Structure probing data (2A3 and DMS) for a 177-nucleotide construct. The 2A3 profile rests on 3,118 reads. Values cover nucleotides 27 to 126. It was measured as part of the RMDB library M2PK50. Conditions: 150 mM KOAc, 10 mM MgCl2 and 150 mM bicine (pH 8.5), 24 C. In probing experiments dimethyl sulfate is read out at A N1 and C N3, which are open when not base-paired.
RNA sequence: GGGAACGACUCGAGUAGAGUCGAAAAGUGGAGGCCUUCGGGCCUCCACAAAUAAAUUCAGCGGUAAUUCGUCCGCAAAUAUUACCGCUGAAGCGGACGAAAAAAGACAGAACUUCGGUUCUGUCAACAUGGAAUGAUAGUUCGCUAUCAUUCCAUGAAAAGAAACAACAACAACAAC
Reactivity to 2A3 in 0.01 (KOAc 150mM, MgCl2 10mM, bicine 150mM(pH8.5), 24C), signal-to-noise 2, nucleotides 027 to 126: g000u010g010g050a020g050g000c040c060u070u070c300g100g020g000c020c000u000c010c010a000c000a000a000a000u000a000a000a000u050u010c000a010g000c010g020g040u030a030a070u060u110c090g050u040c080c050g100c060a010a020a010u110a010u040u030a010c000c000g000c000u010g000a010a020g020c040g070g070a030c040g000a100a040a000a000a090a000g000a000c000a000g000a000a000c000u070u100c200g060g000u000u030c000u010g000u010c000a000a000
Reactivity to DMS in 0.01 (KOAc 150mM, MgCl2 10mM, bicine 150mM(pH8.5), 24C), signal-to-noise 3, nucleotides 027 to 126: g020u010g000g040a020g000g020c010c000u000u020c150g030g030g010c000c000u010c000c010a000c000a010a050a040u010a060a080a100u000u000c010a010g010c010g000g010u000a010a040u010u000c130g010u000c050c080g010c080a050a060a080u000a030u000u000a040c000c010g020c010u010g010a020a010g010c100g000g000a060c080g020a010a070a060a080a090a110g010a000c010a010g010a010a000c000u000u000c160g030g010u000u000c000u000g000u000c000a020a070